[RMDB]
RNA sequence: GGGAACGACUCGAGUAGAGUCGAAAACCAGCUGCAGGCUAAACGACCCACGUAAGGCGGCAGUAUAGUGCCGCUGAUCAUGGUGCGGCUUAGAAGUAAGCCCGACCAGGUUUUCAUGGAACCGUAAGAUACUGAAUUGCUUCGGCAAUUCAGUAUCAAAAGAAACAACAACAACAAC
Reactivity to 2A3 in 0.01 (KOAc 150mM, MgCl2 10mM, bicine 150mM(pH8.5), 24C), signal-to-noise 2, nucleotides 027 to 126: c000c010a010g010c030u070g010c020a050g000g070c020u030a040a070a010c050g100a090c000c020c000a030c030g070u040a010a060g010g000c000g010g000c020a000g020u090a150u250a230g140u050g000c010c010g000c000u010g010a040u060c040a080u040g030g000u090g020c050g020g010c020u020u020a010g010a140a030g080u080a040a000g000c010c030c020g060a050c010c020a000g000g010u020u010u060u130c070a090u130g050g010a040a030c000c010g020u070a070a000
Reactivity to DMS in 0.01 (KOAc 150mM, MgCl2 10mM, bicine 150mM(pH8.5), 24C), signal-to-noise 3, nucleotides 027 to 126: c000c000a110g010c080u000g020c070a080g000g000c020u010a040a060a070c080g000a130c050c020c020a030c050g030u010a110a180g020g010c000g000g010c000a010g020u090a080u050a100g000u000g000c000c010g000c010u000g000a060u010c050a070u010g030g030u000g010c080g000g010c070u010u000a000g000a120a060g000u010a050a070g000c000c000c040g010a070c060c060a050g000g000u000u000u010u010c070a100u030g000g020a030a090c020c030g040u010a130a120

Structure probing data (2A3 and DMS) for a 177-nucleotide construct. For 2A3 the reverse transcriptase was SuperScript II with manganese. Conditions: 150 mM KOAc, 10 mM MgCl2 and 150 mM bicine (pH 8.5), 24 C. Source: RMDB libraries RFM100 and RFMREP, as collected in RNAgym.